Structure probing data (2A3 and DMS) for a 177-nucleotide construct.
Conditions: 150 mM KOAc, 10 mM MgCl2 and 150 mM bicine (pH 8.5), 24 C.
For 2A3 the reverse transcriptase was SuperScript II with manganese.
Values cover nucleotides 27 to 126.
[RMDB]
RNA sequence: GGGAACGACUCGAGUAGAGUCGAAAAGAGGGUCUAGCUUUGAAUCUCAAGAACUAAGCAGCCAUGGGAUAGCUUCAACAGAGAGAGACUUACUUCUUGGGGAUAUCCUGCUCCCCCAUAGCUUAGCCCGGUGUAGUUAUUUCGAUAACUACACCGGAAAAGAAACAACAACAACAAC
Reactivity to 2A3 in 0.01 (KOAc 150mM, MgCl2 10mM, bicine 150mM(pH8.5), 24C), signal-to-noise 2, nucleotides 027 to 126: g040a050g030g030g010u050c020u030a030g050c040u100u060u090g070a140a110u030c050u010c080a070a080g050a130a080c040u030a030a000g030c000a010g030c060c040a040u100g050g000g000a020u010a050g000c010u020u040c070a100a040c040a050g030a000g000a000g000a010g040a210c060u130u100a060c000u000u160c000u020u040g000g000g000g020a010u000a050u100c010c020u040g020c050u000c010c030c000c000c000a070u070a080g020c020u040u010a010g030c000
Reactivity to DMS in 0.01 (KOAc 150mM, MgCl2 10mM, bicine 150mM(pH8.5), 24C), signal-to-noise 2, nucleotides 027 to 126: g000a090g000g000g040u000c030u010a060g020c030u010u010u010g010a130a100u000c040u000c070a130a110g000a100a100c080u000a030a030g010c050a110g000c060c220a090u020g000g000g020a070u000a050g010c060u010u020c070a040a070c160a070g000a100g010a080g010a100g010a070c110u000u000a080c050u010u010c090u000u000g000g000g000g000a060u000a030u000c010c020u000g000c140u000c010c000c010c020c080a070u000a090g030c050u000u010a080g020c270